[RMDB]
RNA sequence: GGGAACGACUCGAGUAGAGUCGAAAAGAUAUGGAGUGGCAAGACAUGCAUACGCGAGUCGGAAACGACUCAUGCAACAGCUUGGCACUCCUAAGUCAAAACGAUUAUACGUUCGCGUAUAAUCGAACCUUACCUUCGUGUUCGCACGAAGGUAAGGAAAAGAAACAACAACAACAAC
Reactivity to 2A3 in 0.01 (KOAc 150mM, MgCl2 10mM, bicine 150mM(pH8.5), 24C), signal-to-noise 4, nucleotides 027 to 126: g030a000u050a010u090g000g000a000g000u000g000g280c020a000a000g030a160c090a300u200g030c020a020u090a100c170g040c080g250a000g000u020c010g010g030a000a030a020c010g000a000c010u000c000a000u030g030c030a230a250c050a140g040c000u020u020g110g040c000a000c000u030c000c010u000a000a000g010u010c010a000a030a110a110c030g020a000u020u010a010u000a010c020g020u030u070c300g000c000g150u020a010u010a000a000u010c000g020a010a010
Reactivity to DMS in 0.01 (KOAc 150mM, MgCl2 10mM, bicine 150mM(pH8.5), 24C), signal-to-noise 2, nucleotides 027 to 126: g010a010u000a180u030g000g020a010g020u010g000g010c010a010a020g010a120c100a180u010g020c030a020u000a120c150g000c200g020a030g010u000c000g000g000a070a040a080c030g010a000c000u000c000a010u000g030c030a070a080c240a130g000c000u010u000g010g000c010a020c000u000c010c010u010a010a020g000u000c020a080a080a100a110c030g030a030u000u000a010u000a000c000g000u010u020c230g010c000g000u010a000u000a010a000u000c000g000a050a040
An RNA of 177 nucleotides, treated with 2A3 and DMS and read out base by base. For 2A3 the reverse transcriptase was SuperScript II with manganese. The RNA was probed in 150 mM KOAc, 10 mM MgCl2 and 150 mM bicine (pH 8.5) at 24 C.